[RMDB]
RNA sequence: GGGAACGACUCGAGUAGAGUCGAAAAGAUAUGGAACCACGAAGGUGAUGACCCUCACAUGGUCACAGUGUAUCGGAAACGAUACAUCACAGCCAUGUGAGGCAAGCCUACCGUGGUUCCUAAGUCACCUAAGAUUGCUGUUCGCAGCAAUCUUAGGAAAAGAAACAACAACAACAAC
Reactivity to 2A3 in 0.01 (KOAc 150mM, MgCl2 10mM, bicine 150mM(pH8.5), 24C), signal-to-noise 2, nucleotides 027 to 126: g020a010u080a020u150g030g010a010a000c010c000a010c060g030a050a000g030g030u040g050a300u220g140a130c070c000c000u010c000a020c010a010u030g020g070u200c050a010c060a130g050u000g020u020a000u020c000g020g030a050a070a020c030g000a000u010a020c020a000u100c020a050c070a010g050c000c000a010u020g000u020g010a020g000g000c000a000a010g010c000c010u070a220c120c020g000u010g000g010u010u000c000c000u000a000a000g000u000c030a020
Reactivity to DMS in 0.01 (KOAc 150mM, MgCl2 10mM, bicine 150mM(pH8.5), 24C), signal-to-noise 2, nucleotides 027 to 126: g030a070u010a300u010g010g000a010a020c000c000a000c000g040a170a010g010g040u000g020a190u000g000a160c300c000c010u020c000a000c000a020u000g010g010u000c030a160c300a220g000u000g000u000a000u000c000g000g010a170a090a230c000g040a000u000a000c040a000u000c040a170c300a220g010c040c000a000u000g000u000g000a010g000g010c000a010a170g000c000c010u000a140c070c000g040u000g000g010u010u010c000c000u000a000a040g000u010c030a270
The record gives the reactivity of an RNA of 177 nucleotides to 2A3 and DMS. Conditions: 150 mM KOAc, 10 mM MgCl2 and 150 mM bicine (pH 8.5), 24 C. DMS (dimethyl sulfate) methylates the pairing face of unpaired adenines and cytosines.